[RMDB]
RNA sequence: GGGAACGACUCGAGUAGAGUCGAAAAAAAAUGGCUGUGAGGAACUACUGUCUUCACGCAGAAAGCGUCUAGCCAUGGCGUUAGUUUGAGUGUCGUGCAGCCUCCAGCCUCGAAAAACCGUCAGAAACUCGAGAAUAGGUUUCGACCUAUUCUCGAGAAAAGAAACAACAACAACAAC
Reactivity to 2A3 in 0.01 (KOAc 150mM, MgCl2 10mM, bicine 150mM(pH8.5), 24C), signal-to-noise 1, nucleotides 027 to 126: a000a010a000a080u050g000g000c040u020g160u150g160a000g030g050a130a010c060u160a030c000u300g040u010c000u000u000c000a000c000g000c000a000g040a020a000a030g000c000g010u000c010u090a070g060c010c030a060u130g010g020c010g030u010u030a060g030u060u090u040g020a030g000u010g020u000c000g090u190g070c030a000g000c010c000u000c010c000a000g000c000c000u030c000g010a040a000a000a000a010c040c000g060u100c040a030g190a120a120a110
Reactivity to DMS in 0.01 (KOAc 150mM, MgCl2 10mM, bicine 150mM(pH8.5), 24C), signal-to-noise 1, nucleotides 027 to 126: a030a040a060a110u000g000g010c000u000g030u020g000a010g010g010a050a000c030u020a300c000u000g010u000c000u000u010c000a010c000g000c000a000g020a070a060a130g020c020g010u000c000u010a080g010c300c300a010u000g000g000c010g000u020u010a070g000u010u000u000g000a100g010u010g000u010c010g010u010g000c010a030g000c000c000u000c000c000a050g030c010c000u010c070g020a010a110a030a060a070c030c040g000u050c090a160g020a130a080a070